Chemical mapping of a 207-nucleotide RNA with 2A3. The 2A3 profile rests on 642 reads. For 2A3 the reverse transcriptase was SuperScript II with manganese. The RNA was probed in 150 mM KOAc, 10 mM MgCl2 and 150 mM bicine (pH 8.5) at 24 C.
[RMDB]
RNA sequence: GGGAACGACUCGAGUAGAGUCGAAAAUCUGCUUUCUCUUUGGCAGCUAUGUUAAUAGAUACAUACUCGCGACACAGCGGGCGCCACUCUCGCCACACCGCGUAGCAUUCUGCGUUUUGGAUGAGCUUUACCCGCCAUCCUCUGUUUUUCAGCAUGACUACGGUACUCGUUUCGACGAGUACCGUAGAAAAGAAACAACAACAACAAC
Reactivity to 2A3 in 0.01 (KOAc 150mM, MgCl2 10mM, bicine 150mM(pH8.5), 24C), signal-to-noise 1, nucleotides 027 to 156: u010c000u000g040c010u040u100u000c110u020c000u200u100u040g000g000c010a020g030c030u040a040u070g040u070u080a060a060u080a230g130a090u100a100c040a000u070a070c040u010c010g020c030g080a040c010a020c010a110g010c040g000g000g060c070g050c030c050a050c010u010c000u000c040g060c000c000a040c020a000c000c030g000c000g070u060a000g000c010a070u100u030c000u050g020c010g050u090u030u110u110g000g030a030u000g010a030g060c000u140u110u100a200c010c020c030g000c000c020a020u000c000c000u000c050u110g060u000u120u000u010u050c050a040g050c030a040u160g000a040